[RMDB]
RNA sequence: GGGAACGACUCGAGUAGAGUCGAAAAGGAGGAAGGAUGUCCAAGCGGAGACGCCCUGAGGAAUCGCUCAUUAGAGUGUGCCUUACAGAUUGUGUAAGGGUUUACAGGUACCGUAGACCACUCUUCAGAAACCUCAGGGGACAGUGACGGUACCAUACGUAGAUCAGUAAUUCGUUACUGAUCUACGAAAAGAAACAACAACAACAAC
Reactivity to DMS in 0.01 (KOAc 150mM, MgCl2 10mM, bicine 150mM(pH8.5), 24C), signal-to-noise 4, nucleotides 027 to 156: g010g020a060g030g000a060a040g000g020a080u000g000u010c050c030a100a110g030c060g000g010a180g020a140c070g000c010c000c010u000g010a020g010g000a030a210u000c020g010c190u000c050a150u000u000a030g000a020g030u010g020u000g020c000c000u010u000a040c010a070g010a210u010u010g010u000g010u000a010a050g000g030g030u000u000u000a050c070a050g010g000u010a020c010c010g040u000a040g000a110c010c010a030c010u000c000u000u000c110a100g000a040a030a300c010c000u000c020a040g010g010g000g000a020c070a050g010u000g000a040c000g010g020u000a020c010c010a050u000a040
Reactivity to 2A3 in 0.01 (KOAc 150mM, MgCl2 10mM, bicine 150mM(pH8.5), 24C), signal-to-noise 2, nucleotides 027 to 156: g020g000a020g000g000a020a020g020g010a020u020g010u000c000c020a040a010g010c010g030g000a030g010a010c020g020c010c000c000u000g000a000g010g000a010a020u040c010g000c030u110c040a060u030u040a000g000a000g000u010g010u090g030c010c000u010u000a000c000a020g170a300u150u160g100u030g000u070a000a000g010g000g000u010u010u060a020c020a010g000g010u010a000c000c010g000u010a010g010a010c020c000a010c000u010c000u030u030c080a020g010a000a010a000c000c000u000c000a000g000g000g000g000a010c000a000g020u030g060a000c010g000g000u000a010c000c000a010u020a030
Structure probing data (DMS and 2A3) for a 207-nucleotide construct. For 2A3, 4,231 sequencing reads were counted. 2A3 adducts were read by reverse transcription with SuperScript II with manganese. DMS adducts were read by reverse transcription with MarathonRT.